RNA sequence: GGGAACGACUCGAGUAGAGUCGAAAAAGGUAGUCCUUCUAUAGUUGAAUUUAAUAGGUUGGCUACCUGUGACUGGACUGAAAGUGGUGAUUACACCCUUGCCAAUACUACAACAGAACCACUCAAACUAAUUAAUGCCCUUCGGGGCAUUAAUUAGAAAAGAAACAACAACAACAAC
Reactivity to DMS in 0.01 (KOAc 150mM, MgCl2 10mM, bicine 150mM(pH8.5), 24C), signal-to-noise 1, nucleotides 027 to 126: a000g020g020u000a020g000u000c000c010u000u020c000u000a040u010a100g030u000u020g010a170a130u000u010u020a060a040u000a040g000g010u000u000g010g010c010u000a010c000c000u000g010u000g010a070c040u070g000g000a270c060u000g010a040a030a060g050u010g020g020u000g000a220u000u020a110c100a080c040c020c010u010u010g010c000c040a060a030u020a070c110u010a020c060a070a140c060a060g000a090a060c040c030a060c100u000c020a080a100a210
The data come from the RNA Mapping Database (RMDB), library 15KREP. Structure probing data (DMS) for a 177-nucleotide construct. The DMS profile rests on 686 reads.